[RMDB]
Overview: Structure probing data (DMS and 2A3) for a 177-nucleotide construct. For DMS the reverse transcriptase was MarathonRT. For 2A3 the reverse transcriptase was SuperScript II with manganese. For DMS, 2,371 sequencing reads were counted. Conditions: 150 mM KOAc, 10 mM MgCl2 and 150 mM bicine (pH 8.5), 24 C.
RNA sequence: GGGAACGACUCGAGUAGAGUCGAAAAUAUUCCGGCGAGAAAGCGGCAUGUGAACUGGCGGCGAUAGACGAUGUCGAUCAGGUGAUGGCUGCUAUUGUUGGCGUCGCAGGGUUGCCUUCCACGCUGGCAUCGCAUACGGGUUCGCCCGUAUGCGAUGAAAAGAAACAACAACAACAAC
Reactivity to DMS in 0.01 (KOAc 150mM, MgCl2 10mM, bicine 150mM(pH8.5), 24C), signal-to-noise 2, nucleotides 027 to 126: u010a190u010u000c000c000g010g030c030g010a280g000a030a050a040g020c020g000g010c010a050u000g010u000g000a070a070c140u000g020g020c010g010g000c010g010a030u000a050g030a080c080g010a120u000g000u010c010g010a060u000c060a190g020g020u010g000a070u000g010g000c030u010g000c000u000a030u000u010g000u000u020g010g010c000g010u000c030g020c030a040g010g020g020u010u010g020c030c010u000u000c020c080a100c020g000c000u010g020g000
Reactivity to 2A3 in 0.01 (KOAc 150mM, MgCl2 10mM, bicine 150mM(pH8.5), 24C), signal-to-noise 2, nucleotides 027 to 126: u190a030u080u050c000c010g000g020c000g000a050g030a000a050a010g050c000g000g000c040a020u040g030u050g110a200a070c080u150g160g000c000g000g020c040g040a030u020a080g040a100c120g080a060u160g030u030c040g030a050u050c040a010g300g140u280g060a030u090g090g010c020u050g020c010u010a050u020u070g010u000u050g030g130c020g000u000c030g030c040a000g070g120g070u070u050g000c000c000u010u040c030c020a240c010g000c000u010g040g000